[RMDB]
The data come from the RNA Mapping Database (RMDB), libraries RFM100 and RFMREP.
The record gives the reactivity of an RNA of 177 nucleotides to DMS and 2A3.

RNA sequence: GGGAACGACUCGAGUAGAGUCGAAAACACGUGUUGGAUUAUGGCUGAACGCCUCUAAGUCAGAAUCCGUGCUAGAUACAAUGACCUUGUCCCGCGCAUUUACCGUUGUGUCGAAAUAAGGCGUAAGUUAUGGUUAUAGUUUCGACUAUAACCAUAAAAAAGAAACAACAACAACAAC
Reactivity to DMS in 0.01 (KOAc 150mM, MgCl2 10mM, bicine 150mM(pH8.5), 24C), signal-to-noise 9, nucleotides 027 to 126: c070a080c160g020u010g010u010u010g010g000a030u010u000a050u000g000g000c010u000g010a120a090c060g010c010c010u000c110u010a120a040g010u000c020a020g000a040a030u000c010c010g010u010g000c060u000a080g010a080u010a040c080a040a050u020g000a090c130c050u000u000g000u000c020c020c020g020c130g010c060a060u010u010u010a080c140c060g010u000u000g010u000g010u000c030g010a060a070a080u020a090a030g000g010c020g010u010a080a090g010
Reactivity to 2A3 in 0.01 (KOAc 150mM, MgCl2 10mM, bicine 150mM(pH8.5), 24C), signal-to-noise 7, nucleotides 027 to 126: c060a020c050g100u090g060u130u190g010g000a030u040u020a030u120g010g000c010u020g020a100a020c020g010c020c000u000c010u040a030a030g010u020c010a010g030a030a010u000c010c000g020u060g020c020u090a070g000a100u050a080c060a060a120u130g060a080c010c020u040u060g030u030c010c010c010g000c010g000c030a090u050u070u150a090c040c040g010u030u020g030u010g020u040c020g050a080a070a090u130a070a020g020g010c010g030u030a030a050g040
2A3 adducts were read by reverse transcription with SuperScript II with manganese. Reactivities are rounded to 0.1 and cut off at 0 and 3.